[RMDB]
Chemical mapping of a 177-nucleotide RNA with 2A3 and DMS.
The reactions ran in a buffer of 150 mM KOAc, 10 mM MgCl2 and 150 mM bicine (pH 8.5), at 24 C.
2A3 adducts were read by reverse transcription with SuperScript II with manganese.
For DMS the reverse transcriptase was MarathonRT.
For 2A3, 1,700 sequencing reads were counted.
The DMS profile rests on 1,826 reads.

RNA sequence: GGGAACGACUCGAGUAGAGUCGAAAAGAGAGUGACAUGCCGCCAGAUGUCUGGGGUGGGGCAAGGCCCAAUGAAUUUGAGGAGUACUUCAACAUCAGCUAUCUCCUCGCUGACAUCAUCCAAUCGCGAAUUGCGCAGUAUUCGUACUGCGCAAUUCAAAAGAAACAACAACAACAAC
Reactivity to 2A3 in 0.01 (KOAc 150mM, MgCl2 10mM, bicine 150mM(pH8.5), 24C), signal-to-noise 2, nucleotides 027 to 126: g100a010g020a000g030u040g030a020c020a090u090g020c030c020g050c020c000a030g020a100u060g040u070c010u030g000g000g080g000u090g030g000g000g000c040a090a050g090g000c000c000c000a040a060u130g070a040a140u090u070u180g010a000g000g000a000g050u030a030c000u060u100c090a050a110c000a160u190c040a000g010c060u080a060u120c000u020c040c000u010c020g000c050u010g000a000c000a060u040c000a040u000c050c010a050a150u160c080g000c010
Reactivity to DMS in 0.01 (KOAc 150mM, MgCl2 10mM, bicine 150mM(pH8.5), 24C), signal-to-noise 2, nucleotides 027 to 126: g010a070g000a060g000u000g020a070c080a070u000g020c050c070g020c080c040a090g020a090u010g000u010c020u010g040g000g000g020u000g020g010g000g030c040a040a130g000g020c000c050c030a060a080u010g010a070a120u010u000u010g000a070g010g000a060g020u000a050c100u000u000c160a050a100c140a110u000c090a040g000c090u000a090u000c010u000c010c010u000c050g020c100u000g000a170c110a030u000c030a080u010c030c080a020a070u000c120g010c260